[RMDB]
RNA sequence: GGGAACGACUCGAGUAGAGUCGAAAAACUAGUAUGUACAGGAGUGAGUUGACCUGUCAUCUAGACUGCUGACCAUCAACUCACCGGUCAGCUGGAUGAUGUCCACAGAGUACGACAUCAGUACUCAGAGUUAGGAUGCGUUCGCGUAUCUUAACUCAAAAGAAACAACAACAACAAC
Reactivity to DMS in 0.01 (KOAc 150mM, MgCl2 10mM, bicine 150mM(pH8.5), 24C), signal-to-noise 9, nucleotides 027 to 126: a180c010u000a000g010u050a010u000g010u060a010c000a010g000g000a050g020u020g000a060g020u000u010g010a120c010c010u000g010u000c000a010u000c010u000a010g010a200c040u010g010c000u000g000a010c010c020a120u030c110a060a070c100u010c110a080c200c180g000g000u000c000a000g000c000u010g000g010a090u020g000a070u010g000u000c010c020a100c230a090g000a040g010u000a030c050g010a060c190a080u040c110a100g010u000a020c010u000c020a140
Reactivity to 2A3 in 0.01 (KOAc 150mM, MgCl2 10mM, bicine 150mM(pH8.5), 24C), signal-to-noise 9, nucleotides 027 to 126: a000c000u010a010g050u120a040u050g060u100a010c000a000g000g020a010g050u140g050a080g030u050u060g130a120c000c000u000g000u000c000a000u000c000u000a010g040a080c030u030g000c000u000g000a000c010c000a040u100c040a040a090c060u040c090a060c040c070g000g000u000c000a000g000c010u010g030g010a060u090g010a020u060g060u030c020c010a050c050a070g040a010g020u040a020c060g080a010c070a150u120c040a050g010u020a010c010u010c040a010

The record gives the reactivity of an RNA of 177 nucleotides to DMS and 2A3. For 2A3 the reverse transcriptase was SuperScript II with manganese. The 2A3 profile rests on 109,895 reads. The reactions ran in a buffer of 150 mM KOAc, 10 mM MgCl2 and 150 mM bicine (pH 8.5), at 24 C.